RNA sequence: GGGAACGACUCGAGUAGAGUCGAAAACUUUGGAGUCUGUGGCCAAACUCCAUUUGACAGAAAAUGUUACUUGCAACAUCCAGUCCAGCCCAUGUUUUCAAGGAUAGGUCUAACCCACAGAAUGCUCUGCUCCGUACUGAUUCGUCAGUACGGAGCAAAAAGAAACAACAACAACAAC
Reactivity to DMS in 0.01 (KOAc 150mM, MgCl2 10mM, bicine 150mM(pH8.5), 24C), signal-to-noise 1, nucleotides 027 to 126: c110u010u000u010g010g010a060g000u000c080u000g000u000g010g010c010c060a140a150a030c010u040c030c040a100u000u000u010g000a040c090a050g000a070a100a190a090u000g000u000u000a020c130u020u000g010c170a040a150c040a080u040c030c040a040g000u000c040c010a100g000c020c030c050a160u000g000u000u020u010u010c050a010a130g000g050a140u000a020g000g000u000c030u000a130a020c110c000c000a050c300a020g020a080a090u060g000c010u000c000
Reactivity to 2A3 in 0.01 (KOAc 150mM, MgCl2 10mM, bicine 150mM(pH8.5), 24C), signal-to-noise 3, nucleotides 027 to 126: c050u040u100u040g050g010a000g020u050c030u080g040u070g020g010c060c060a000a010a040c010u040c000c000a020u100u060u100g140a100c070a040g160a070a170a030a060u110g030u050u110a090c020u020u050g010c020a050a020c010a120u050c010c000a050g060u040c100c000a020g000c010c000c030a090u080g030u010u060u020u100c010a060a070g060g020a030u020a050g080g000u000c010u020a050a120c030c000c030a040c000a000g050a110a030u150g040c050u020c010

An RNA of 177 nucleotides, treated with DMS and 2A3 and read out base by base.
For 2A3, 1,364 sequencing reads were counted.
High DMS reactivity at an A or C suggests that its Watson-Crick edge is free.
It was measured as part of the RMDB library OK1LIB.